[RMDB]
Source: RMDB library M2PK50, as collected in RNAgym. An RNA of 177 nucleotides, treated with 2A3 and DMS and read out base by base. For 2A3 the reverse transcriptase was SuperScript II with manganese.
RNA sequence: GGGAACGACUCGAGUAGAGUCGAAAAAAGCUCAUUUUCGAAUGAGCUUGAAGCGUGAACGCAGGAUAACGCAGAAACGCGCCGCUGAACCACCCAAGCGAAAGAUUAAGGUCUUCGGACCUUAAAACUGGUGAUAAGUAUUCGUACUUAUCACCAGAAAAGAAACAACAACAACAAC
Reactivity to 2A3 in 0.01 (KOAc 150mM, MgCl2 10mM, bicine 150mM(pH8.5), 24C), signal-to-noise 4, nucleotides 027 to 126: a000a010g000c010u020c000a020u000u010u060u050c070g070a010a000u010g000a000g010c010u000u010g000a030a010g020c010g010u020g050a110a010c030g010c020a020g090g120a200u110a250a030c070g000c020a010g070a040a070a000c010g010c010g040c060c020g000c020u030g020a030a030c050c020a040c020c040c010a030a000g010c010g070a160a050a010g060a020u050u040a010a000g010g000u000c010u020u080c210g080g010a000c000c000u000u010a010a020a010a030
Reactivity to DMS in 0.01 (KOAc 150mM, MgCl2 10mM, bicine 150mM(pH8.5), 24C), signal-to-noise 6, nucleotides 027 to 126: a010a000g010c000u000c000a010u000u000u000u020c160g020a000a010u000g000a010g020c000u000u000g010a090a110g010c020g030u010g010a130a190c160g000c010a070g020g010a160u010a090a120c130g010c030a080g010a150a130a030c030g010c030g000c130c010g020c010u000g000a060a060c110c090a110c020c020c020a080a080g000c050g010a120a090a080g000a180u000u000a010a000g000g000u000c000u000u010c200g020g000a000c000c000u000u000a000a020a080a120